Structure probing data (2A3) for a 207-nucleotide construct. For 2A3 the reverse transcriptase was SuperScript II with manganese. It was measured as part of the RMDB library OK3TST. Conditions: 150 mM KOAc, 10 mM MgCl2 and 150 mM bicine (pH 8.5), 24 C.
RNA sequence: GGGAACGACUCGAGUAGAGUCGAAAAGGUAACGCUUUCUGGACACCGGCCGCAGUCCCGCGGUGCAACACCUCCGCACGUACCCAGCACAGCAUCUUCGUUCUCCGAGAGCGCGUCCUCUAUCGUAGGGAACACUUCACCGCUGUCGGCUAGCGCGUGGAUGAUGUGGAUUCGUCCACAUCAUCCAAAAAGAAACAACAACAACAAC
Reactivity to 2A3 in 0.01 (KOAc 150mM, MgCl2 10mM, bicine 150mM(pH8.5), 24C), signal-to-noise 1, nucleotides 027 to 156: g160g010u100a100a000c060g030c010u030u100u100c090u090g110g000a030c050a050c080c050g080g020c020c000g000c020a000g040u000c000c030c000g010c000g010g010u050g070c020a030a030c000a000c050c000u080c060c050g080c010a050c000g040u150a160c000c000c020a030g070c050a020c000a030g070c000a090u020c130u130u140c060g080u050u040c000u000c050c010g020a020g020a000g040c080g050c080g040u040c020c010u000c030u080a090u090c040g070u060a070g010g020g000a070a020c060a050c070u070u130c050a020c050c000g000c000u000g130u010c000g040g020c000u010a030g000c020g000c010g020